[RMDB]
RNA sequence: GGGAACGACUCGAGUAGAGUCGAAAAUCACGCACUUUUUACAGUGAAUCGUGUAUGAUGUAGCACAUGAAUGUUUCAUCACAUUCAAUAAAAUUUCUCUACUGAUUUUACGAGGCGACUGUGUCAACGAGGGGUAAUUAUUCGUAAUUACCCCUCGAAAAGAAACAACAACAACAAC
Reactivity to DMS in 0.01 (KOAc 150mM, MgCl2 10mM, bicine 150mM(pH8.5), 24C), signal-to-noise 5, nucleotides 027 to 126: u010c030a080c120g020c130a080c100u010u010u010u010u000a040c060a040g020u010g010a250a200u000c020g030u010g020u000a020u000g010a110u010g000u000a020g010c300a060c230a110u000g000a010a020u000g000u000u000u000c300a090u010c250a030c000a010u000u000c010a030a100u020a020a050a080a100u000u020u010c130u010c010u010a010c020u020g010a170u000u000u000u000a050c010g020a040g000g010c220g000a030c030u000g010u010g020u000c160a070a140
Reactivity to 2A3 in 0.01 (KOAc 150mM, MgCl2 10mM, bicine 150mM(pH8.5), 24C), signal-to-noise 3, nucleotides 027 to 126: u040c020a040c070g060c000a090c040u130u070u070u100u190a030c040a020g010u010g000a010a010u030c010g000u020g030u020a010u030g010a000u010g010u020a010g030c100a060c010a200u070g000a030a010u010g020u020u110u140c090a070u060c000a000c000a000u000u000c030a020a030u160a100a070a030a040u080u170u050c070u010c010u020a010c010u020g020a050u050u050u030u090a000c000g000a000g000g000c020g000a000c000u010g020u040g070u200c060a090a040

Structure probing data (DMS and 2A3) for a 177-nucleotide construct. Source: RMDB library OK2TST, as collected in RNAgym. For 2A3, 3,395 sequencing reads were counted.